[RMDB]
RNA sequence: GGGAACGACUCGAGUAGAGUCGAAAAUCGGUCAGCGCGACCGCGGCCUUGCGGCCCCUGCCGUAGCUGACCCCGACCCGGUCGAACACGAUCGCCGGCUCGUUCGUCGCCGUCCCGGUGGGGGCGAUCGACUAUUAUCAUUCGUGAUAAUAGUCGAAAAAGAAACAACAACAACAAC
Reactivity to 2A3 in 0.01 (KOAc 150mM, MgCl2 10mM, bicine 150mM(pH8.5), 24C), signal-to-noise 9, nucleotides 027 to 126: u150c040g000g000u010c000a010g030c020g000c020g040a010c010c010g000c010g010g020c010c020u090u240g130c190g050g010c000c000c000c000u010g000c000c010g010u030a120g000c010u010g010a010c000c010c000c010g030a030c010c010c000g000g060u220c090g040a150a070c140a080c300g100a160u040c010g000c020c000g030g000c020u010c010g040u090u030c020g050u030c020g030c110c010g040u030c010c010c010g020g070u070g020g010g000g000g010c010g010a040
Reactivity to DMS in 0.01 (KOAc 150mM, MgCl2 10mM, bicine 150mM(pH8.5), 24C), signal-to-noise 9, nucleotides 027 to 126: u010c110g010g010u000c010a040g020c040g000c040g000a010c020c050g030c300g000g010c010c020u010u010g010c300g010g010c000c010c030c010u000g010c010c000g010u000a070g020c010u000g000a020c000c010c170c030g000a040c140c000c020g000g010u010c030g010a050a120c240a140c250g000a070u000c020g010c030c020g000g010c130u000c010g010u000u000c040g000u000c020g010c040c020g000u000c030c030c010g000g000u000g010g010g000g010g010c060g000a040